Conditions: 150 mM KOAc, 10 mM MgCl2 and 150 mM bicine (pH 8.5), 24 C. An RNA of 177 nucleotides, treated with DMS and read out base by base. Source: RMDB library OK2TRN, as collected in RNAgym.
RNA sequence: GGGAACGACUCGAGUAGAGUCGAAAAUAAAGAGGCUGGGACAGUAACUUUAGGCAGUCAGCUGGGGUCUGUCUGUUAAGCAAGGAGCAGGAAUCAGCCUUGUUCUCUACUGGCCUGUCUGGGAAGCACACCGCAAUUACUUCGGUAAUUGCGGUGUAAAAGAAACAACAACAACAAC
Reactivity to DMS in 0.01 (KOAc 150mM, MgCl2 10mM, bicine 150mM(pH8.5), 24C), signal-to-noise 1, nucleotides 027 to 126: u050a060a160a110g000a090g010g030c000u000g010g060g050a240c070a070g000u000a120a220c050u000u000u010a100g020g000c010a030g030u000c060a050g020c120u000g030g030g010g000u010c010u000g020u000c020u030g030u000u000a050a130g010c220a000a070g030g000a200g030c000a070g000g000a080a200u010c100a070g010c050c010u000u000g000u000u000c040u000c050u030a020c040u000g000g010c040c010u010g010u000c070u000g000g010g010a100a070g000c220
Values are in units of 0.01, from 0 to 300, in steps of 10. DMS adducts were read by reverse transcription with MarathonRT.